[RMDB]
RNA sequence: GGGAACGACUCGAGUAGAGUCGAAAAGAUAUGGACCCUACUACCCACCAUACGAUCGCACUCGGAAACGAGUGACCCGAUCGUGAGGUAGGGUCCUAAGUCACACUCCGGCGUUCGCGCCGGAGAACACCAUUUACGCGUUCGCGCGUAAAUGGUGAAAAGAAACAACAACAACAAC
Reactivity to 2A3 in 0.01 (KOAc 150mM, MgCl2 10mM, bicine 150mM(pH8.5), 24C), signal-to-noise 2, nucleotides 027 to 126: g040a010u080a060u160g000g010a000c010c030c020u000a000c020u120a150c010c070c140a170c090c090a210u140a300c030g010a000u000c010g030c040a000c000u010c000g030g010a000a080a010c010g010a000g020u010g000a020c010c040c070g010a000u000c010g060u080g010a100g000g000u010a010g020g000g000u010c000c000u000a020a000g030u020c020a070c000a000c070u000c000c000g050g040c010g070u110u150c300g000c030g010c110c010g000g000a010g010a000a000
Reactivity to DMS in 0.01 (KOAc 150mM, MgCl2 10mM, bicine 150mM(pH8.5), 24C), signal-to-noise 2, nucleotides 027 to 126: g010a100u000a120u000g020g010a010c000c000c020u000a010c020u000a200c060c080c080a180c260c130a210u030a050c020g000a010u000c010g000c000a030c000u000c010g020g000a050a040a080c010g010a030g040u000g000a110c180c290c060g000a000u000c010g030u000g010a050g030g010u000a040g000g000g020u000c000c020u000a020a080g000u030c050a110c230a160c000u000c010c000g010g000c000g020u000u010c200g000c010g000c010c000g000g000a000g030a110a090
Source: RMDB library TTRDEL, as collected in RNAgym. This 177-nucleotide RNA was probed chemically with 2A3 and DMS. 2A3 adducts were read by reverse transcription with SuperScript II with manganese. Reactivities are given for positions 27 through 126. The reactions ran in a buffer of 150 mM KOAc, 10 mM MgCl2 and 150 mM bicine (pH 8.5), at 24 C.